[RMDB]
RNA sequence: GGGAACGACUCGAGUAGAGUCGAAAAUUAGCCGUAUAUUAGCAAAGAUUAAUCAAAGAGCUGCUCAAUUUGGUAAAGAAGGAGGGCUUCAAGAUUGAGUGUUACAAAAGGUGUUUGUAUCGAUGUAGAUCACUCAGAUUUGCUACAUGAGAAAGUAGUUUCAACUAUCAUUCGUGAUAGUUGAAACAAAAGAAACAACAACAACAAC
Reactivity to DMS in 0.01 (KOAc 150mM, MgCl2 10mM, bicine 150mM(pH8.5), 24C), signal-to-noise 2, nucleotides 027 to 156: u010u000a140g030c020c060g030u000a110u000a110u010u000a020g000c010a130a070a140g020a210u010u010a080a100u000c010a080a280a170g000a040g000c060u010g030c020u000c040a300a090u010u000u000g030g020u010a040a030a120g040a110a050g010g010a050g010g000g010c060u020u000c040a070a290g010a070u000u010g020a030g020u000g000u000u020a060c030a050a020a050a210g000g010u000g010u030u000u000g010u000a080u000c030g010a230u010g000u000a050g030a090u010c010a030c010u010c070a090g000a160u000u010u000g010c000u000a050c150a050u010g020a230g000a070a060a120g010u000a100
Reactivity to 2A3 in 0.01 (KOAc 150mM, MgCl2 10mM, bicine 150mM(pH8.5), 24C), signal-to-noise 5, nucleotides 027 to 156: u070u050a030g050c010c020g060u060a110u020a030u180u080a040g010c020a070a050a010g070a240u200u260a090a020u120c030a070a150a030g020a000g020c010u280g070c010u040c020a070a190u060u090u070g100g030u190a160a060a090g080a060a020g050g010a030g000g010g000c000u050u050c070a070a020g010a020u030u060g010a010g000u010g010u010u030a020c030a010a060a050a060g020g000u060g040u130u280u220g100u100a040u040c030g010a040u050g000u020a030g010a170u120c000a020c020u000c020a010g030a080u040u030u040g000c020u040a040c010a080u120g020a090g090a080a110a010g070u170a020